[RMDB]
RNA sequence: GGGAACGACUCGAGUAGAGUCGAAAAACGGAAACUUAGAAACUUCUGAAGACAAGAAACUUGAUCUUCAAUUUGUGAUGAACUCACAAACACAACAAAAUCUACUAUUUGCUUAAUAAAUCGUAGUCAGGCGAAUAUAUUAGUUUCAAAUAUUUGCGUAUAAUUCAUUCUUCGGAAUGAAUUAUACAAAAGAAACAACAACAACAAC
Reactivity to 2A3 in 0.01 (KOAc 150mM, MgCl2 10mM, bicine 150mM(pH8.5), 24C), signal-to-noise 3, nucleotides 027 to 156: a000c090g020g060a050a050a020c050u100u100a100g110a080a170a050c030u170u080c020u150g010a010a000g020a000c020a030a030g070a130a280a050c030u030u030g020a090u070c000u010u010c030a040a050u000u000u000g020u000g010a070u060g040a030a030c040u010c010a010c000a010a040a010c060a010c030a070a120c030a030a140a020a170u030c020u020a020c000u000a040u040u010u010g010c010u170u150a120a040u120a170a200a040u040c020g010u000a010g090u050c030a010g060g000c020g020a040a020u090a000u020a030u070u160a030g010u010u000u040c030a060a080a040u070a030u050u120u080g010c020

Record summary:
Structure probing data (2A3) for a 207-nucleotide construct. The data come from the RNA Mapping Database (RMDB), library RSTRND. Conditions: 150 mM KOAc, 10 mM MgCl2 and 150 mM bicine (pH 8.5), 24 C. For 2A3 the reverse transcriptase was SuperScript II with manganese.